The record gives the reactivity of an RNA of 177 nucleotides to DMS and 2A3. The data come from the RNA Mapping Database (RMDB), library M2PK50. 2A3 is a SHAPE reagent: it acylates the 2'-hydroxyl of flexible nucleotides of all four kinds. Conditions: 150 mM KOAc, 10 mM MgCl2 and 150 mM bicine (pH 8.5), 24 C.

[RMDB]
RNA sequence: GGGAACGACUCGAGUAGAGUCGAAAACGACUUACCUUCGGGUAAGUCGACAUAGGUGAGAUCAUCGGAUAGCUGCCUAGGUGAGUUCAUCGGAUAGCUGCCACAUGUAACGGUUCGCCGUUACAAAUAACACUAUGGACUUCGGUCCAUAGUGUUAAAAAGAAACAACAACAACAAC
Reactivity to DMS in 0.01 (KOAc 150mM, MgCl2 10mM, bicine 150mM(pH8.5), 24C), signal-to-noise 4, nucleotides 027 to 126: c020g010a020c000u000u000a020c000c000u000u010c230g020g010g020u000a000a000g000u000c000g000a030c190a070u000a080g010g010u000g000a090g010a050u000c020a050u000c040g010g000a110u010a080g020c060u000g010c030c010u000a090g020g000u000g010a090g010u010u000c020a030u000c030g010g010a100u000a060g020c070u010g000c030c020a090c200a140u000g000u010a000a000c000g000g010u000u010c210g020c000c000g010u010u000a010c000a040a080a080
Reactivity to 2A3 in 0.01 (KOAc 150mM, MgCl2 10mM, bicine 150mM(pH8.5), 24C), signal-to-noise 4, nucleotides 027 to 126: c010g010a000c010u000u000a000c010c000u010u070c250g030g000g010u000a000a000g000u000c000g000a000c010a060u120a040g050g020u050g040a080g000a050u070c020a020u070c070g040g010a060u070a080g030c050u060g050c030c030u070a110g060g020u050g040a110g040u060u110c020a020u030c040g050g030a050u060a040g040c050u040g030c010c020a070c010a090u090g000u010a010a000c000g000g040u030u050c190g020c060c000g000u010u000a000c010a000a020a010